Notes: This 177-nucleotide RNA was probed chemically with DMS and 2A3. DMS adducts were read by reverse transcription with MarathonRT. For 2A3 the reverse transcriptase was SuperScript II with manganese.

RNA sequence: GGGAACGACUCGAGUAGAGUCGAAAAGUUGCCGACGAACCUUCCAACCUUGCAAACGUCGUUUUCGACAACCUUCCAACCUUCCAAUCUACUCGAGAGGAGGAGGAGGAGGAGGAGGAGGAAUUAAUCUAGAUAAAUGCUUCGGCAUUUAUCUAGAAAAAGAAACAACAACAACAAC
Reactivity to DMS in 0.01 (KOAc 150mM, MgCl2 10mM, bicine 150mM(pH8.5), 24C), signal-to-noise 2, nucleotides 027 to 126: g000u000u010g040c080c000g010a060c120g020a080a110c030c010u020u000c060c070a030a130c020c050u000u000g000c100a060a070a100c130g000u010c030g000u000u000u000u000c010g000a000c030a090a120c040c000u000u000c010c010a090a090c030c020u000u010c010c010a140a230u000c000u000a080c060u000c020g030a030g010a200g000g000a120g010g000a170g030g010a100g070g000a130g040g000a110g010g010a140g000g000a070g010g010a300a030u000u000a030a120
Reactivity to 2A3 in 0.01 (KOAc 150mM, MgCl2 10mM, bicine 150mM(pH8.5), 24C), signal-to-noise 2, nucleotides 027 to 126: g080u080u100g110c060c010g010a060c010g020a040a100c010c010u050u010c040c040a120a120c030c030u060u110g000c060a050a070a070c040g040u020c010g010u080u040u060u090c000g010a010c000a070a100c020c030u080u060c020c000a130a060c020c030u160u110c050c000a040a110u000c010u040a060c040u030c040g020a030g000a020g040g070a030g040g010a070g000g070a100g030g130a080g020g040a020g010g060a030g010g030a010g050g030a020a040u090u090a120a050